RNA sequence: GGGAACGACUCGAGUAGAGUCGAAAACUGUGGUGAGGCCCUAUCUAGUAUAGCAAUCCACCAAGCAGGUGAAUUCACACAAUUCAGGUUCUCAGAGAAAAUGCGCCCUGACUUGACAGGUAUGGUCAGGAUGGGCAUGAUUCGUCAUGCCCAUCCUAAAAGAAACAACAACAACAAC
Reactivity to 2A3 in 0.01 (KOAc 150mM, MgCl2 10mM, bicine 150mM(pH8.5), 24C), signal-to-noise 2, nucleotides 027 to 126: c000u000g050u000g050g090u000g000a060g010g060c050c000c020u000a000u030c000u000a050g120u170a040u000a040g070c070a000a100u060c000c000a050c000c000a010a000g080c050a030g000g000u000g040a000a010u000u030c010a020c000a000c010a010a090u080u020c010a020g040g070u160u150c050u000c010a060g030a000g040a140a040a000a000u150g060c030g020c010c000c000u050g000a050c020u100u060g020a030c020a040g000g020u030a090u080g030g010u050c080
Reactivity to DMS in 0.01 (KOAc 150mM, MgCl2 10mM, bicine 150mM(pH8.5), 24C), signal-to-noise 1, nucleotides 027 to 126: c030u030g040u000g000g000u030g000a140g000g050c240c290c000u000a000u000c030u000a000g080u050a030u000a030g000c010a160a060u000c030c000a020c000c000a020a180g000c070a000g000g030u030g020a090a020u000u000c130a130c200a090c180a150a090u000u010c010a100g000g000u000u000c030u040c000a080g000a050g090a030a040a130a000u000g000c070g000c200c000c000u010g000a040c030u060u020g010a110c090a030g030g000u000a080u030g030g000u030c120
Chemical mapping of a 177-nucleotide RNA with 2A3 and DMS. It was measured as part of the RMDB library OK1LIB. DMS adducts were read by reverse transcription with MarathonRT. The RNA was probed in 150 mM KOAc, 10 mM MgCl2 and 150 mM bicine (pH 8.5) at 24 C. For DMS, 1,101 sequencing reads were counted.